[RMDB]
RNA sequence: GGGAACGACUCGAGUAGAGUCGAAAAUGUCUGCCUUCACCACCUUUAGCUUCACAAGCAGUGGCCAUGGCAAAUAGGAAAAGGUUUGGGUGGGAGAAAUACAGAAGAAGCCAUUCCUGAUUAGGCCCCACACUAGGAGAUUCGUCUCCUAGUGUGGAAAAGAAACAACAACAACAAC
Reactivity to 2A3 in 0.01 (KOAc 150mM, MgCl2 10mM, bicine 150mM(pH8.5), 24C), signal-to-noise 2, nucleotides 027 to 126: u070g050u000c010u020g070c010c000u040u040c030a050c000c010a040c020c010u110u170u120a030g020c010u080u070c110a040c030a190a070g050c010a030g010u040g060g020c050c040a040u030g030g020c010a000a060a030u110a040g040g000a000a100a050a080g070g000u030u140u120g090g030g000u100g000g080g000a090g040a010a050a010u200a060c080a030g070a070a010g030a040a010g050c010c010a060u070u020c010c010u040g030a140u060u090a050g040g000c000c000
Reactivity to DMS in 0.01 (KOAc 150mM, MgCl2 10mM, bicine 150mM(pH8.5), 24C), signal-to-noise 2, nucleotides 027 to 126: u010g010u000c050u000g030c060c020u010u010c100a130c010c000a060c010c060u000u020u010a110g000c040u000u010c200a110c210a110a050g010c040a070g050u010g000g010c010c060a130u010g010g000c030a040a050a090u000a080g000g000a070a050a080a070g000g000u010u000u010g000g000g040u010g000g010g020a120g000a060a070a030u000a130c110a070g010a090a060g000a150a100g000c050c030a140u010u000c000c010u020g000a090u000u000a110g010g020c090c050